The data come from the RNA Mapping Database (RMDB), library OK1LIB.
Chemical mapping of a 177-nucleotide RNA with 2A3 and DMS.
Values cover nucleotides 27 to 126.
For 2A3 the reverse transcriptase was SuperScript II with manganese.
For DMS the reverse transcriptase was MarathonRT.
Reactivities are rounded to 0.1 and cut off at 0 and 3.

[RMDB]
RNA sequence: GGGAACGACUCGAGUAGAGUCGAAAAACAGAAUUUUCCGGGCUUUACACGGUCGUAGAGCUUGCUUCGCGGUCGUAAUGGCGGAGACCUUUGAAUACAAGGGCUAGGGAUUCGGGGUGUAUGUCAGGAGGUCAAUAUUUUUCGAAAUAUUGACCUCAAAAGAAACAACAACAACAAC
Reactivity to 2A3 in 0.01 (KOAc 150mM, MgCl2 10mM, bicine 150mM(pH8.5), 24C), signal-to-noise 5, nucleotides 027 to 126: a000c100a070g190a170a090u020u030u040u050c020c000g060g050g030c020u100u120u090a040c080a010c060g090g000u040c040g010u080a080g000a000g060c040u090u130g060c010u060u050c010g000c010g020g020u010c000g040u030a080a090u080g040g010c060g040g020a040g040a050c000c030u040u080u160g120a140a040u170a190c050a060a050g000g030g000c060u080a020g050g020g050a050u090u090c020g030g000g000g000u050g010u020a070u120g070u070c030a040g070
Reactivity to DMS in 0.01 (KOAc 150mM, MgCl2 10mM, bicine 150mM(pH8.5), 24C), signal-to-noise 3, nucleotides 027 to 126: a110c180a170g020a110a150u020u010u010u020c040c060g010g020g010c090u010u010u030a030c110a060c000g020g000u020c040g010u000a040g010a040g000c030u010u030g020c040u010u000c040g010c010g010g010u000c010g010u000a050a060u020g010g020c030g010g000a070g000a120c030c020u010u010u020g010a170a110u050a100c100a050a070g010g000g000c080u010a070g000g000g000a110u020u030c080g000g000g010g000u020g000u000a050u010g000u020c100a080g010